[RMDB]
RNA sequence: GGGAACGACUCGAGUAGAGUCGAAAAGAUAUGGAUAUACCGCCCACCAGGGAGCUGUGUCGGAAACGACCAGCAUCGAUCUGGUGUAACAAGUAUAUCCUAAGUCAAACGCGUCUUCGGACGCGAACGUGUUAUGUACCUUCGGGUACAUAACACGAAAAGAAACAACAACAACAAC
Reactivity to DMS in 0.01 (KOAc 150mM, MgCl2 10mM, bicine 150mM(pH8.5), 24C), signal-to-noise 2, nucleotides 027 to 126: g000a030u020a300u010g030g040a000u000a000u020a000c000c050g000c300c200c010a030c000c050a000g000g000g000a010g050c000u000g000u010g000u000c000g000g000a050a100a160c000g010a000c000c000a000g000c000a190u000c210g010a020u000c020u000g000g010u010g000u000a050a040c130a210a060g000u010a000u000a010u000c000c000u000a070a030g000u010c050a020a050a270c000g000c000g010u000c000u000u010c180g000g000a050c000g000c000g020a000a080
Reactivity to 2A3 in 0.01 (KOAc 150mM, MgCl2 10mM, bicine 150mM(pH8.5), 24C), signal-to-noise 2, nucleotides 027 to 126: g020a010u040a050u140g000g000a000u030a010u000a000c020c030g010c040c030c010a010c000c020a000g020g030g010a030g000c000u050g020u100g010u300c010g000g060a060a080a050c010g000a000c000c000a000g000c020a080u300c000g020a050u000c000u000g000g000u000g000u100a040a040c110a160a000g010u010a000u000a010u010c000c000u030a110a020g060u000c050a060a060a110c030g000c010g000u000c000u100u090c300g120g010a010c000g000c000g030a020a000
Chemical mapping of a 177-nucleotide RNA with DMS and 2A3. The 2A3 profile rests on 4,404 reads. DMS adducts were read by reverse transcription with MarathonRT. The RNA was probed in 150 mM KOAc, 10 mM MgCl2 and 150 mM bicine (pH 8.5) at 24 C.